[RMDB]
Chemical mapping of a 207-nucleotide RNA with 2A3 and DMS. 2A3 adducts were read by reverse transcription with SuperScript II with manganese. Values cover nucleotides 27 to 156. The 2A3 profile rests on 1,869 reads. DMS adducts were read by reverse transcription with MarathonRT. Source: RMDB library OK3TST, as collected in RNAgym.
RNA sequence: GGGAACGACUCGAGUAGAGUCGAAAAGGAGCUUGCAGAACGAGACACCGCGUACACCGAAUUGCAGAACCAGUUGGGCGCUGCGUGGAUCGAGCUGGAGAAGGUCUAUCUCUCCCUCGACGCCAAGGUCCCCAACGACAAGGUCCGGGCCUUCAUCAAGUGUAGGUACAUUCGUGUACCUACACUUAAAAGAAACAACAACAACAAC
Reactivity to 2A3 in 0.01 (KOAc 150mM, MgCl2 10mM, bicine 150mM(pH8.5), 24C), signal-to-noise 3, nucleotides 027 to 156: g030g000a020g030c020u050u020g020c060a020g010a150a030c040g040a080g010a080c030a010c040c000g000c030g030u040a020c060a040c030c040g040a130a140u150u100g020c050a000g050a080a050c040c000a030g000u030u010g000g020g020c120g000c070u050g020c050g110u060g050g000a030u050c000g000a000g000c110u050g070g010a030g020a090a060g050g050u090c050u090a160u110c040u020c000u010c040c010c000u000c010g020a040c130g020c020c020a020a050g000g020u160c000c000c000c000a010a030c010g020a010c040a040a050g050g000u010c020c000g080g030g000c000c010u060u060c030a110u080c050
Reactivity to DMS in 0.01 (KOAc 150mM, MgCl2 10mM, bicine 150mM(pH8.5), 24C), signal-to-noise 2, nucleotides 027 to 156: g020g020a030g010c040u000u010g000c020a070g030a070a260c070g000a130g010a040c040a140c030c020g060c020g040u000a060c020a100c030c020g000a060a080u010u000g000c030a140g000a060a090c120c030a200g020u000u010g000g010g020c090g010c050u000g000c110g010u020g010g040a100u000c000g000a010g000c020u000g050g000a020g020a050a100g030g030u000c170u010a060u000c030u000c010u020c000c000c000u000c000g000a030c060g060c040c040a090a080g040g020u020c070c000c000c000a000a080c030g010a060c030a060a100g010g010u030c020c020g020g020g050c040c040u000u000c010a160u010c090